[RMDB]
RNA sequence: GGGAACGACUCGAGUAGAGUCGAAAAGAUAUGGACAUCGAUCAGGACCCUCUUAAGUAUCGGAAACGAUACGGAGGAGCCUGGGAGUCCUAAGUCAAAGGCUAAGGUGGUUCGCCACCUUAGCCAACUAGACCACUUACUUCGGUAAGUGGUCUAGAAAAGAAACAACAACAACAAC
Reactivity to 2A3 in 0.01 (KOAc 150mM, MgCl2 10mM, bicine 150mM(pH8.5), 24C), signal-to-noise 2, nucleotides 027 to 126: g040a010u090a060u200g000g020a020c050a300u140c080g240a120u130c050a040g110g000a300c000c060c010u080c000u180u250a270a060g000u000a000u000c000g000g000a020a040a090c020g000a000u000a000c000g030g000a020g020g010a050g010c000c000u000g040g000g010a040g000u000c000c020u020a130a010g030u040c080a150a120a090g000g030c000u000a030a010g000g000u040g010g020u070u120c190g110c040c000a000c030c040u000u000a000g000c000c000a020a000
Reactivity to DMS in 0.01 (KOAc 150mM, MgCl2 10mM, bicine 150mM(pH8.5), 24C), signal-to-noise 2, nucleotides 027 to 126: g000a040u000a300u010g000g020a010c010a210u010c140g000a140u000c000a010g020g000a050c010c000c000u010c000u000u040a050a140g010u000a000u000c000g010g000a080a100a150c000g000a010u000a000c000g000g000a030g010g000a060g000c020c000u000g000g010g000a040g030u000c000c000u020a000a150g000u010c040a100a090a160g000g000c000u000a000a010g000g010u000g020g000u000u010c250g000c000c000a000c000c000u000u000a000g000c000c010a000a020
Structure probing data (2A3 and DMS) for a 177-nucleotide construct. The data come from the RNA Mapping Database (RMDB), library TTRDEL. The RNA was probed in 150 mM KOAc, 10 mM MgCl2 and 150 mM bicine (pH 8.5) at 24 C.